RNA sequence: GGGAACGACUCGAGUAGAGUCGAAAAUGACUGAUAUUCAGGUUUUGUUGGCGGUUGAGGUGUAACAGCUACUUGAGAUACCAAAGUCUGAUAUUCAGAAAGCUGUGGAUGUUUGGGUUCAACAUCCCUACACGCAUAGCUUCGGCUAUGCGUGUAGAAAAGAAACAACAACAACAAC
Reactivity to 2A3 in 0.01 (KOAc 150mM, MgCl2 10mM, bicine 150mM(pH8.5), 24C), signal-to-noise 1, nucleotides 027 to 126: u160g010a010c010u000g020a030u000a050u130u020c000a010g000g000u070u010u040u050g060u010u060g060g040c090g000g050u020u090g050a080g000g120u120g000u070a030a020c020a030g000c010u020a040c010u100u150g020a020g060a120u080a060c040c030a030a030a020g000u010c010u010g000a010u040a100u110u090c010a020g110a100a080a040g040c110u140g040u090g080g020a040u010g010u020u030u180g080g040g050u190u160c000a000a000c010a010u010c000c000
Reactivity to DMS in 0.01 (KOAc 150mM, MgCl2 10mM, bicine 150mM(pH8.5), 24C), signal-to-noise 2, nucleotides 027 to 126: u000g010a260c030u010g010a100u010a130u000u000c020a010g020g000u010u000u000u000g020u010u000g000g010c100g000g040u000u010g000a110g020g030u010g020u010a070a040c080a130g000c050u000a080c060u010u000g020a100g020a160u010a180c080c020a040a050a070g010u000c020u010g010a010u000a080u010u000c020a010g010a110a070a080g010c100u000g040u000g000g020a030u000g010u000u000u000g030g010g000u000u000c030a040a020c080a000u000c000c000
Description
An RNA of 177 nucleotides, treated with 2A3 and DMS and read out base by base. For DMS, 1,670 sequencing reads were counted. For 2A3, 931 sequencing reads were counted. The data come from the RNA Mapping Database (RMDB), library OK2TRN. For 2A3 the reverse transcriptase was SuperScript II with manganese. For DMS the reverse transcriptase was MarathonRT. The reactions ran in a buffer of 150 mM KOAc, 10 mM MgCl2 and 150 mM bicine (pH 8.5), at 24 C.